[RMDB]
Chemical mapping of a 177-nucleotide RNA with 2A3 and DMS. Reactivities are rounded to 0.1 and cut off at 0 and 3. 2A3 adducts were read by reverse transcription with SuperScript II with manganese. For DMS, 11,068 sequencing reads were counted. It was measured as part of the RMDB library TTRDEL. Reactivities are given for positions 27 through 126. For DMS the reverse transcriptase was MarathonRT. For 2A3, 11,376 sequencing reads were counted.
RNA sequence: GGGAACGACUCGAGUAGAGUCGAAAAGAUAUGGAAUCCUCGCGAUAAGACCUGGUCGGAAACGACCAAGGUCUUUUGACGCAGGAUUCCUAAGUCAAAGUCGUACUGACUUCGGUCAGUACGACAACUAACAAUUCAUCUUCGGAUGAAUUGUUAGAAAAGAAACAACAACAACAAC
Reactivity to 2A3 in 0.01 (KOAc 150mM, MgCl2 10mM, bicine 150mM(pH8.5), 24C), signal-to-noise 3, nucleotides 027 to 126: g000a000u030a000u090g000g010a000a000u000c020c010u050c170g010c010g090a160u090a300a020g000a010c000c010u010g000g020u000c000g000g000a030a000a020c000g000a000c000c020a000a020g010g010u020c000u000u000u000u020g010a000c010g000c000a000g000g010a000u000u000c000c000u000a030a000g000u010c060a200a100a020g000u000c000g000u010a000c000u000g020a000c000u030u050c210g100g000u000c000a010g000u010a000c000g000a000c000a000a000
Reactivity to DMS in 0.01 (KOAc 150mM, MgCl2 10mM, bicine 150mM(pH8.5), 24C), signal-to-noise 5, nucleotides 027 to 126: g000a010u000a120u010g000g000a010a000u000c000c000u000c200g020c000g010a090u010a040a010g010a010c000c000u000g000g010u000c000g020g000a030a030a070c000g010a010c000c000a010a020g010g010u000c000u000u000u000u010g010a240c030g000c030a010g000g000a010u000u000c000c000u000a000a060g000u000c010a100a100a140g010u000c000g010u000a000c000u010g000a010c000u000u010c200g020g010u000c000a010g010u000a000c000g010a000c000a010a090